[RMDB]
RNA sequence: GGGAACGACUCGAGUAGAGUCGAAAAGCCCCACACACCCUAGGCCUCCCUUGGCCUGGUUGCACCAUGGUGCCAUGCAGAGACUGCGCCCACUGAAAGACAGCUGCCCUCACUGGCACCGCCUGGCAACAUUGGCGGUGUCUUGGAGGCUAUGAUGCCCAAAUAAUUACUUCGGUAAUUAUUUGGGAAAAGAAACAACAACAACAAC
Reactivity to DMS in 0.01 (KOAc 150mM, MgCl2 10mM, bicine 150mM(pH8.5), 24C), signal-to-noise 1, nucleotides 027 to 156: g050c050c010c010c080a070c130a120c020a040c060c000c010u000a100g030g000c030c010u000c110c070c060u000u010g040g000c010c010u000g020g010u000u000g000c090a160c020c030a040u000g040g050u000g080c010c050a100u000g010c030a070g000a150g000a050c000u010g030c020g000c050c000c030a280c070u010g020a100a080a080g000a110c020a120g020c080u000g000c030c010c010u000c050a030c090u010g020g010c020a020c000c010g000c010c010u000g030g040c070a130a140c160a240u010u000g020g000c030g000g010u000g000u000c030u000u020g000g020a050g010g010c030u000a070u010g010a140u000g010
Reactivity to 2A3 in 0.01 (KOAc 150mM, MgCl2 10mM, bicine 150mM(pH8.5), 24C), signal-to-noise 2, nucleotides 027 to 156: g000c000c000c020c000a010c010a000c010a010c000c020c020u090a050g010g000c010c010u110c040c030c000u070u060g000g000c000c010u000g010g000u020u040g030c040a040c040c000a080u090g010g010u030g000c010c010a060u090g020c020a010g030a010g030a110c050u050g000c030g040c020c010c040a100c070u100g060a050a040a010g070a040c040a010g010c020u050g020c010c020c030u030c030a130c080u020g000g040c010a000c010c010g010c000c010u050g030g000c030a070a040c010a250u070u160g000g000c000g020g000u000g000u010c000u000u030g020g000a010g020g000c010u040a100u070g060a020u140g020